[RMDB]
The data come from the RNA Mapping Database (RMDB), library M2RFPK. The record gives the reactivity of an RNA of 207 nucleotides to 2A3. For 2A3 the reverse transcriptase was SuperScript II with manganese. Reactivities are given for positions 27 through 156. The 2A3 profile rests on 558 reads.

RNA sequence: GGGAACGACUCGAGUAGAGUCGAAAAAGCGCGCAUACUACGGUAUGCGCGCAAUUAGAAAUCGGGAAUGAUGUUCUCCCCUGGGAUUCCAAAACCGCUGUUUCGCUGAUGACGUCUGCUUUUUUAAUCACCACCGUUUGGUUCGCCAAACGGUGAACCUAUAUAAUUGCUUCGGCAAUUAUAUAGGAAAAGAAACAACAACAACAAC
Reactivity to 2A3 in 0.01 (KOAc 150mM, MgCl2 10mM, bicine 150mM(pH8.5), 24C), signal-to-noise 1, nucleotides 027 to 156: a010g000c000g060c000g040c030a000u010a010c000u020a010c080g100g050u000a000u010g010c010g020c000g010c010a000a000u000u030a000g070a060a060a030u050c040g000g000g060a050a040u030g010a030u070g070u120u000c060u050c060c000c000c000u050g000g020g100a150u080u050c030c000a010a080a080a070c060c010g000c030u060g030u110u060u050c030g020c100u070g010a040u030g040a030c030g080u070c060u010g090c040u030u060u000u010u110u180a110a030u130c060a070c100c010a010c000c000g000u010u000u010g030g030u040u010c060g010c050c000a000a000a030c000g000g000u000g000a000a000